An RNA of 177 nucleotides, treated with 2A3 and DMS and read out base by base.
The RNA was probed in 150 mM KOAc, 10 mM MgCl2 and 150 mM bicine (pH 8.5) at 24 C.
Source: RMDB library OK2TRN, as collected in RNAgym.
The 2A3 profile rests on 1,637 reads.
The DMS profile rests on 1,450 reads.
For 2A3 the reverse transcriptase was SuperScript II with manganese.
2A3 is a SHAPE reagent: it acylates the 2'-hydroxyl of flexible nucleotides of all four kinds.
RNA sequence: GGGAACGACUCGAGUAGAGUCGAAAAAGUACCGCGCGCCAUGGAUCCGUGCGGAUCAUACUGGAUCGUCGAUCCGCGCGAUCUCAGACGAUCUCGCUACUAGUAGUAGUCAUGGCGCUAGGAUCGCUCUUGCAAUCCGUUUCGACGGAUUGCAAGAAAAAGAAACAACAACAACAAC
Reactivity to 2A3 in 0.01 (KOAc 150mM, MgCl2 10mM, bicine 150mM(pH8.5), 24C), signal-to-noise 1, nucleotides 027 to 126: a000g080u090a060c000c000g030c010g000c000g000c020c030a010u010g030g000a030u000c050c020g030u070g130c070g010g040a030u030c030a000u060a110c060u110g110g060a130u110c040g040u040c040g050a020u020c000c000g000c010g020c040g020a010u040c050u040c010a090g030a080c040g010a050u000c050u060c060g000c010u050a010c030u030a030g260u030a020g000u010a010g020u100c010a010u000g000g000c000g020c000u010a000g000g010a020u040c050g020c080
Reactivity to DMS in 0.01 (KOAc 150mM, MgCl2 10mM, bicine 150mM(pH8.5), 24C), signal-to-noise 2, nucleotides 027 to 126: a160g000u010a160c010c020g000c200g000c010g010c000c000a000u000g000g000a010u000c080c050g050u000g020c150g010g000a040u000c010a150u000a130c040u000g000g000a100u000c030g020u000c110g000a090u000c030c060g000c100g010c060g000a030u000c070u000c090a230g020a140c090g010a020u000c020u000c130g010c020u010a040c010u000a140g000u020a160g020u010a040g000u000c030a010u000g000g010c000g020c020u000a040g020g000a090u000c080g010c020